[RMDB]
RNA sequence: GGGAACGACUCGAGUAGAGUCGAAAAUUGACCAUGAGGCGUUCACGUCGCAGGGCCGACGAAAUAUGCUGAGACCUGCCUACUCGUGUGCAAUGUGAUAUUAGCCUCAUUUUGAUUUGAAUUAUGACUACCCUGCUAUCUUCGGAUAGCAGGGUAGAAAAGAAACAACAACAACAAC
Reactivity to DMS in 0.01 (KOAc 150mM, MgCl2 10mM, bicine 150mM(pH8.5), 24C), signal-to-noise 2, nucleotides 027 to 126: u000u010g030a200c050c100a040u000g000a010g010g010c010g000u000u030c140a080c020g020u000c030g010c010a070g000g060g010c040c040g040a050c040g000a080a050a210u010a050u010g000c060u020g010a170g010a130c070c060u020g010c010c060u000a090c090u010c020g020u000g020u000g010c000a010a020u010g000u000g000a040u000a100u000u000a190g020c000c000u000c000a000u000u030u010u010g000a110u000u000u000g010a140a120u010u000a090u020g010a300
Reactivity to 2A3 in 0.01 (KOAc 150mM, MgCl2 10mM, bicine 150mM(pH8.5), 24C), signal-to-noise 2, nucleotides 027 to 126: u040u040g070a040c080c020a020u020g000a000g050g030c100g050u150u140c090a050c090g030u010c010g000c010a010g000g030g070c050c030g020a060c010g030a050a070a000u170a050u090g030c040u000g010a020g090a190c020c030u040g000c010c000u030a040c010u030c010g040u090g000u030g000c020a010a030u050g000u010g010a030u040a090u170u130a020g010c000c010u000c030a010u090u080u010u070g100a100u000u050u140g080a100a010u200u090a110u250g120a010